[RMDB]
RNA sequence: GGGAACGACUCGAGUAGAGUCGAAAAAUUCCGGUGACAAGAGUCAUCGUCGAUAUUAAUUCGUUCAGUAAAUUUUGUGGUUUUUCACCGUUUAACAAAAUCGGAGCCCAUAAGAGGAUAACAGCUAGUAAUCACUCCGAUUCGUCGGAGUGAUUACAAAAGAAACAACAACAACAAC
Reactivity to 2A3 in 0.01 (KOAc 150mM, MgCl2 10mM, bicine 150mM(pH8.5), 24C), signal-to-noise 3, nucleotides 027 to 126: a000u060u000c020c030g000g010u020g000a000c010a160a140g100a070g050u010c000a020u000c000g000u000c000g010a030u020a040u240u180a100a140u110u010c040g010u070u100c060a030g090u180a040a110a220u000u080u030u050g050u110g020g000u030u020u070u200u180c080a070c020c000g020u000u010u180a230a130c100a030a100a010a070u120c040g000g000a000g030c000c000c000a020u090a010a060g110a010g050g020a020u060a170a000c020a020g080c020u070a040
Reactivity to DMS in 0.01 (KOAc 150mM, MgCl2 10mM, bicine 150mM(pH8.5), 24C), signal-to-noise 1, nucleotides 027 to 126: a130u000u000c030c020g010g050u000g040a020c010a190a080g000a190g000u000c000a000u000c020g000u040c110g000a020u110a040u000u010a050a250u050u030c070g000u010u010c040a170g000u030a000a020a060u010u000u000u020g030u020g000g000u010u020u040u020u040c130a060c000c070g020u020u010u000a120a050c220a000a020a030a000u000c040g000g000a150g040c030c000c030a010u000a090a030g030a090g000g000a160u010a020a030c090a040g000c100u010a120
An RNA of 177 nucleotides, treated with 2A3 and DMS and read out base by base. It was measured as part of the RMDB library RFM100. Conditions: 150 mM KOAc, 10 mM MgCl2 and 150 mM bicine (pH 8.5), 24 C.